[RMDB]
RNA sequence: GGGAACGACUCGAGUAGAGUCGAAAAAAAGAUAUGGAAGCUUUUGACGCUGGAACUGGACGUUGAAAGAUUCUCGGAAACGAGAAUCUGGAGUCCUAAGUACAGCGAUAAGCUUCCUAAGUCAAAAUCAUAGUACAUGCUUCGGCAUGUACUAUGAAAAAGAAACAACAACAACAAC
Reactivity to DMS in 0.01 (KOAc 150mM, MgCl2 10mM, bicine 150mM(pH8.5), 24C), signal-to-noise 2, nucleotides 027 to 126: a100a100a060g020a050u000a300u000g020g000a020a000g000c010u000u000u000u000g010a230c060g000c000u010g030g010a250a130c250u000g000g000a010c000g020u010u000g030a270a180a030g000a010u000u000c010u000c020g010g000a140a060a100c010g010a000g000a020a000u000c010u000g000g000a030g000u000c010c000u000a000a030g020u000a150c000a000g000c000g000a060u000a010a000g010c000u000u000c000c020u010a030a100g020u000c020a060a080a100a090
Reactivity to 2A3 in 0.01 (KOAc 150mM, MgCl2 10mM, bicine 150mM(pH8.5), 24C), signal-to-noise 1, nucleotides 027 to 126: a010a000a050g060a030u110a060u150g000g000a000a010g000c000u130u180u250u230g210a120c020g000c010u010g020g010a030a010c010u010g000g030a000c030g160u300u060g000a000a030a000g020a000u020u000c000u000c020g010g010a080a100a020c010g000a010g000a000a000u040c010u000g000g000a020g000u000c000c000u000a010a000g000u010a010c000a030g000c010g010a010u000a010a000g000c000u000u000c000c000u000a120a000g050u030c010a030a020a010a190